Structure probing data (2A3 and DMS) for a 177-nucleotide construct. Source: RMDB library RFM100, as collected in RNAgym. The 2A3 profile rests on 749 reads. For 2A3 the reverse transcriptase was SuperScript II with manganese. Reactivities are given for positions 27 through 126. The RNA was probed in 150 mM KOAc, 10 mM MgCl2 and 150 mM bicine (pH 8.5) at 24 C.

[RMDB]
RNA sequence: GGGAACGACUCGAGUAGAGUCGAAAAGAAAAUGCAACGCUGCCCGUGCAGGGUUUUCUGAGCGGGAUGAAAAAAUCAGACAAAUAUCCAAGUUAUGAGUAAUUACUUUGUUGGAAGGAGGGAGCAGGGUAAUAUCACCGUUCGCGGUGAUAUUACCAAAAGAAACAACAACAACAAC
Reactivity to 2A3 in 0.01 (KOAc 150mM, MgCl2 10mM, bicine 150mM(pH8.5), 24C), signal-to-noise 2, nucleotides 027 to 126: g000a000a110a020a010u050g000c060a080a040c010g020c100u030g040c020c000c020g040u040g020c070a190g040g020g000u050u100u160u070c000u040g020a020g010c000g030g000g020a000u180g030a030a000a000a100a000a050u040c010a030g030a110c040a000a100a050u150a070u000c080c040a000a030g020u050u080a070u050g080a000g030u150a080a120u120u070a080c080u170u080u140g020u040u060g030g010a080a060g000g050a030g050g010g000a020g000c030a040g020
Reactivity to DMS in 0.01 (KOAc 150mM, MgCl2 10mM, bicine 150mM(pH8.5), 24C), signal-to-noise 2, nucleotides 027 to 126: g010a070a090a050a020u030g000c080a070a160c130g010c040u020g020c000c000c020g100u000g060c020a080g000g000g020u040u010u050u020c010u000g000a150g010c070g020g040g000a050u000g000a000a020a070a080a030a040u020c010a080g010a060c070a040a090a090u010a060u020c020c060a020a110g000u040u040a040u000g000a040g010u030a140a050u020u030a080c020u010u000u000g030u000u020g000g020a060a100g000g000a040g000g020g010a040g010c130a100g000